[RMDB]
An RNA of 177 nucleotides, treated with DMS and 2A3 and read out base by base. The reactions ran in a buffer of 150 mM KOAc, 10 mM MgCl2 and 150 mM bicine (pH 8.5), at 24 C.
RNA sequence: GGGAACGACUCGAGUAGAGUCGAAAAGUUUUACACUGACAUGUUCUGUGGGCUUAACUGAAUGUCCAAGCUUUAUGACAUCACUGAAGGCAUGUGAUUCUGCUAUGUGUUAUGGGGCAACAGUAGACCAUUACGACGCAUUCGUGCGUCGUAAUGGAAAAGAAACAACAACAACAAC
Reactivity to DMS in 0.01 (KOAc 150mM, MgCl2 10mM, bicine 150mM(pH8.5), 24C), signal-to-noise 2, nucleotides 027 to 126: g010u000u000u000u000a110c060a010c060u000g020a070c100a130u000g000u000u000c040u000g060u000g000g000g000c040u000u000a070a060c050u010g000a090a060u000g020u000c020c050a080a130g010c090u000u010u010a070u010g030a080c100a040u000c080a070c100u010g020a160a080g020g000c030a040u000g020u010g000a100u000u000c090u000g000c000u000a050u000g000u000g010u010u000a050u010g020g000g030g000c050a060a090c040a090g030u010a130g000a230
Reactivity to 2A3 in 0.01 (KOAc 150mM, MgCl2 10mM, bicine 150mM(pH8.5), 24C), signal-to-noise 2, nucleotides 027 to 126: g010u000u000u000u110a070c050a010c020u060g040a030c030a230u120g070u130u010c030u080g040u000g020g000g020c030u080u070a150a040c040u030g060a120a080u100g030u040c040c030a000a020g030c000u050u080u040a120u160g040a000c000a030u080c010a030c090u050g030a050a040g090g000c070a080u050g030u020g040a110u030u000c050u010g030c010u050a030u160g060u000g020u110u050a100u120g000g040g000g050c010a040a020c000a080g070u070a010g060a020